[RMDB]
RNA sequence: GGGAACGACUCGAGUAGAGUCGAAAAUCAGAAUCCGUACCGGAACGCGGCGAUGUUGCCCCGCACGUUGUAGUUGGAUACGAAUAGGCCUACGGGCCCUGAACCUCAGCAGGUCGGCGACGGCUCCGUACAUGCGUACAUUCGUGUACGCAUGUACAAAAGAAACAACAACAACAAC
Reactivity to 2A3 in 0.01 (KOAc 150mM, MgCl2 10mM, bicine 150mM(pH8.5), 24C), signal-to-noise 4, nucleotides 027 to 126: u070c010a010g060a040a040u010c020c000g010u050a030c000c010g030g030a030a030c050g000c030g030g010c020g050a130u050g030u050u140g030c020c000c000c000g010c020a040c050g010u000u030g040u030a080g020u020u060g050g020a090u020a090c010g020a030a050u070a110g020g000c010c000u000a020c150g010g020g020c020c000c000u030g010a060a070c000c010u070c040a050g040c010a010g020g030u020c020g010g030c010g000a020c010g030g020c010u020c030c040
Reactivity to DMS in 0.01 (KOAc 150mM, MgCl2 10mM, bicine 150mM(pH8.5), 24C), signal-to-noise 3, nucleotides 027 to 126: u010c080a090g000a100a070u030c020c030g010u020a110c020c000g000g020a060a050c080g040c030g000g000c040g010a040u010g030u010u000g040c020c030c040c030g000c090a100c100g010u000u010g020u010a080g000u000u000g000g010a130u020a060c150g000a070a100u020a090g000g010c020c010u000a160c110g010g000g000c030c030c030u000g000a080a110c050c010u000c050a090g000c060a040g010g000u010c040g000g000c060g000a050c110g000g010c040u020c040c080
Source: RMDB libraries RFM100 and RFMREP, as collected in RNAgym. An RNA of 177 nucleotides, treated with 2A3 and DMS and read out base by base. The reactions ran in a buffer of 150 mM KOAc, 10 mM MgCl2 and 150 mM bicine (pH 8.5), at 24 C. Values are in units of 0.01, from 0 to 300, in steps of 10. 2A3 adducts were read by reverse transcription with SuperScript II with manganese. Values cover nucleotides 27 to 126.